[RMDB]
RNA sequence: GGGAACGACUCGAGUAGAGUCGAAAACUACGCCCACGUGCCAGCGCGCAGGAUAGUCUGGCUGCAGGCCGCUCAGCCGCUGUUGCAGGCGAUGGGUCUGGCGUCUGUGCGUCACUUCUCCCGCCUGAUUAAAAGCCCAUUUCGAUGGGCUUUUAAUAAAAGAAACAACAACAACAAC
Reactivity to DMS in 0.01 (KOAc 150mM, MgCl2 10mM, bicine 150mM(pH8.5), 24C), signal-to-noise 5, nucleotides 027 to 126: c110u000a080c150g010c010c020c030a090c170g030u000g020c080c030a040g010c070g010c100g020c040a050g020g000a080u000a070g000u000c050u010g020g010c080u000g010c060a050g010g010c030c050g010c080u000c060a060g000c040c020g000c020u000g010u000u000g010c050a100g000g010c020g020a090u000g010g010g020u000c060u010g010g000c020g010u010c100u000g010u000g010c020g010u000c060a050c090u010u000c060u000c020c060c020g020c070c030u010g000
Reactivity to 2A3 in 0.01 (KOAc 150mM, MgCl2 10mM, bicine 150mM(pH8.5), 24C), signal-to-noise 1, nucleotides 027 to 126: c020u090a040c070g000c000c010c060a050c070g000u030g040c030c000a050g010c010g020c000g060c040a020g090g050a050u150a100g110u050c050u040g020g050c020u060g020c030a050g020g050c040c050g070c020u020c000a020g070c060c030g010c000u110g050u230u210g100c000a010g040g020c010g100a130u130g010g070g040u030c030u020g030g000c000g000u040c080u140g270u250g000c000g030u020c020a020c060u060u000c030u030c000c000c000g050c000c000u060g020
Chemical mapping of a 177-nucleotide RNA with DMS and 2A3. The reactions ran in a buffer of 150 mM KOAc, 10 mM MgCl2 and 150 mM bicine (pH 8.5), at 24 C. For 2A3 the reverse transcriptase was SuperScript II with manganese. The DMS profile rests on 7,454 reads. The 2A3 profile rests on 1,029 reads.